[RMDB]
RNA sequence: GGGAACGACUCGAGUAGAGUCGAAAAGUUGCCUUCAGUGGAGAACAAGGUUAGUUGCUGUCCUGGCAACAAAACUUGCUGAAUAGCGCCACGGACCGCUACCAAGAGAGCCUUCCAGAUCUCGCGACUUCUCAGCCAUGUUCGCAUGGCUGAGAAGAAAAGAAACAACAACAACAAC
Reactivity to DMS in 0.01 (KOAc 150mM, MgCl2 10mM, bicine 150mM(pH8.5), 24C), signal-to-noise 1, nucleotides 027 to 126: g000u000u000g000c110c000u010u040c000a020g110u000g080g020a020g050a010a140c130a270a120g010g000u000u000a280g000u000u020g040c000u000g040u070c050c030u110g000g040c010a060a000c100a040a010a030a060c040u040u000g080c090u040g000a040a060u010a040g040c000g020c060c050a110c130g000g020a000c040c060g050c070u000a080c000c070a000a040g000a130g040a170g000c010c000u000u030c070c050a090g040a070u060c000u000c050g040c090g000a100
Reactivity to 2A3 in 0.01 (KOAc 150mM, MgCl2 10mM, bicine 150mM(pH8.5), 24C), signal-to-noise 2, nucleotides 027 to 126: g040u040u060g030c010c000u070u030c040a040g010u080g100g050a090g020a020a040c080a100a020g030g040u150u100a030g030u040u140g030c040u090g050u160c040c040u020g020g000c000a020a010c020a020a080a000a010c020u050u060g090c000u060g020a090a190u080a200g060c040g020c030c010a010c090g030g000a010c000c030g000c010u010a040c010c000a040a010g070a040g010a010g100c010c000u040u000c060c000a030g000a110u020c010u020c050g020c000g060a040